RNA sequence: GGGAACGACUCGAGUAGAGUCGAAAAGAGCCGGAGGCACGCGGUGACCGGACGCGGUGGCCUGUCGUGCCGGCAGAAACUGCGGAGCAUGGUGACCGGUACACAAUGAUAAUCUCAUCACAGCAACUUGACUGCGUUGAUUCGUCAACGCAGUCAAAAAAGAAACAACAACAACAAC
Reactivity to DMS in 0.01 (KOAc 150mM, MgCl2 10mM, bicine 150mM(pH8.5), 24C), signal-to-noise 1, nucleotides 027 to 126: g020a210g000c000c000g060g010a240g030g010c040a100c030g010c000g000g030u000g000a020c000c020g000g030a170c300g020c000g000g080u000g000g040c000c020u020g020u000c020g060u000g000c080c000g000g060c000a050g030a070a100a150c020u000g000c150g000g000a050g000c140a100u030g000g100u000g000a060c100c000g030g050u030a130c030a240c050a030a100u010g000a030u040a040a090u000c030u000c090a070u000c000a120c070a100g000c200a100a250c260
Reactivity to 2A3 in 0.01 (KOAc 150mM, MgCl2 10mM, bicine 150mM(pH8.5), 24C), signal-to-noise 1, nucleotides 027 to 126: g010a000g060c050c000g000g140a220g040g030c000a000c000g000c000g020g000u000g050a010c030c000g090g030a040c030g070c060g190g030u000g130g120c050c000u000g040u120c000g000u000g080c000c000g000g000c010a000g050a030a100a000c030u130g000c070g010g040a040g040c020a090u030g010g020u050g010a130c000c000g110g000u220a040c080a050c000a070a300u100g070a010u000a190a150u060c000u000c000a080u030c000a000c000a020g050c000a010a020c000
This 177-nucleotide RNA was probed chemically with DMS and 2A3. Source: RMDB library RFM100, as collected in RNAgym. For DMS the reverse transcriptase was MarathonRT.